[RMDB]
RNA sequence: GGGAACGACUCGAGUAGAGUCGAAAAGCACGUCCGGUAAGACCCGUGCGAACACUUGAGCUCCGGCUUGGCCGCUCUUGUGGAUUAGGACGUUCUAGCUCCGGCUUGGCCGCUAGUUCGUCCGAAAAGGCUAAUACUACUUCGGUAGUAUUAGCCUAAAAGAAACAACAACAACAAC
Reactivity to 2A3 in 0.01 (KOAc 150mM, MgCl2 10mM, bicine 150mM(pH8.5), 24C), signal-to-noise 6, nucleotides 027 to 126: g030c000a000c020g030u100c110c030g020g050u080a090a050g100a170c030c010c010g020u010g010c030g010a060a020c010a010c010u010u020g010a000g020c050u080c080c040g160g000c100u180u260g140g040c010c010g000c020u000c010u000u000g010u010g020g040a070u050u190a070g000g000a000c000g000u000u000c010u000a020g000c030u050c110c050g200g000c130u110u270g180g010c020c010g000c000u010a000g010u000u010c000g000u010c000c000g000a020a000a000
Reactivity to DMS in 0.01 (KOAc 150mM, MgCl2 10mM, bicine 150mM(pH8.5), 24C), signal-to-noise 4, nucleotides 027 to 126: g000c010a050c020g010u020c160c090g000g020u010a080a070g000a300c050c050c030g030u000g000c030g020a140a130c020a040c010u010u010g000a020g000c030u020c130c050g000g000c050u040u020g010g010c040c240g020c000u010c010u000u000g000u000g020g000a150u020u010a120g010g000a000c000g000u000u010c000u010a000g000c080u000c150c020g000g020c080u040u000g010g010c020c100g000c000u010a010g010u010u000c000g000u030c010c010g000a000a040a090
An RNA of 177 nucleotides, treated with 2A3 and DMS and read out base by base. The 2A3 profile rests on 5,516 reads. For DMS, 6,823 sequencing reads were counted.